[RMDB]
RNA sequence: GGGAACGACUCGAGUAGAGUCGAAAACCUCACUACAUUUUACUGUUCCUAAAGAAUUUGUGACAGGUACAGUAAAACGUAUUGCAAGGUUUAUCAGUUCCUAUAAACAGGUGAAUAACAAUAUAUGAAAAGCAAAGACUGUUCGCAGUCUUUGCAAGCUGGAAAUAGAGUUCGCUCUAUUUCCAGCAAAAGAAACAACAACAACAAC
Reactivity to DMS in 0.01 (KOAc 150mM, MgCl2 10mM, bicine 150mM(pH8.5), 24C), signal-to-noise 1, nucleotides 027 to 156: c000c000u000c020a010c060u010a000c030a030u000u020u020u020a050c030u000g030u000u000c000c020u000a300a120a110g040a210a060u000u000u020g080u040g010a110c190a020g020g000u000a020c000a030g010u000a000a010a010a000c030g040u000a000u000u000g090c080a180a060g000g080u010u000u000a110u010c100a130g030u000u000c000c020u000a150u000a080a060a100c080a110g010g010u030g040a170a130u020a130a080c040a010a200u000a140u010a090u030g000a160a080a110a180g010c000a000a070a020g000a030c000u040g000u000u010c300g000c040a010g040u010c010u010u000u000g030c010a010a010
Reactivity to 2A3 in 0.01 (KOAc 150mM, MgCl2 10mM, bicine 150mM(pH8.5), 24C), signal-to-noise 4, nucleotides 027 to 156: c000c000u060c000a010c000u000a000c000a040u010u000u010u000a000c000u000g000u040u070c000c000u090a100a140a090g090a250a280u180u250u280g160u110g070a060c080a080g000g010u000a010c000a000g000u000a000a000a000a000c010g020u010a000u010u030g050c090a080a020g020g010u010u010u010a110u110c020a010g010u000u010c000c000u030a060u190a100a090a020c090a030g060g080u090g050a080a060u140a110a030c040a120a020u070a020u040a030u210g120a100a110a000a010g000c000a000a000a000g000a000c000u000g010u010u040c120g010c080a000g000u010c000u000u000u000g000c000a010a000

Chemical mapping of a 207-nucleotide RNA with DMS and 2A3. For 2A3 the reverse transcriptase was SuperScript II with manganese. Values cover nucleotides 27 to 156. For DMS the reverse transcriptase was MarathonRT. The reactions ran in a buffer of 150 mM KOAc, 10 mM MgCl2 and 150 mM bicine (pH 8.5), at 24 C. The 2A3 profile rests on 2,509 reads.